[RMDB]
RNA sequence: GGGAACGACUCGAGUAGAGUCGAAAAGAAAAGAAAACUCUCGUGUCACGAUAAUAAGUGAUGCGUGCAAUUUAGAGAAACUCGACGCAACUCUAGAUUUGCGCGUCGGGGCAGAGAGGAAAGAAAAGGCAAUGUAUAACUUCGGUUAUACAUUGCCAAAAGAAACAACAACAACAAC
Reactivity to DMS in 0.01 (KOAc 150mM, MgCl2 10mM, bicine 150mM(pH8.5), 24C), signal-to-noise 2, nucleotides 027 to 126: g020a060a050a060a110g000a080a120a050a050c010u010c000u000c000g020u000g040u020c000a010c000g010a180u060a070a060u070a090a130g020u010g000a050u030g000c000g020u000g000c060a030a020u000u010u000a010g020a040g000a100a050a070c060u010c100g020a060c100g010c110a080a240c030u000c040u000a010g000a040u010u000u010g020c060g020c020g000u000c040g040g000g000g000c030a060g010a000g000a030g040g010a050a050a150g000a050a100a020a090
Reactivity to 2A3 in 0.01 (KOAc 150mM, MgCl2 10mM, bicine 150mM(pH8.5), 24C), signal-to-noise 4, nucleotides 027 to 126: g030a000a030a020a000g120a010a120a010a010c020u020c010u010c040g200u010g020u020c010a010c020g030a030u100a300a050u130a240a040g130u090g160a060u100g010c000g000u050g000c010a000a030u000u020u040a030g010a000g010a060a140a050c060u090c120g110a070c090g070c100a060a070c060u050c010u020a010g010a190u040u080u180g000c020g000c000g000u000c010g030g000g000g000c020a000g020a000g010a000g010g040a060a150a040g050a000a040a000a000

Annotation:
Chemical mapping of a 177-nucleotide RNA with DMS and 2A3. It was measured as part of the RMDB library OK1LIB.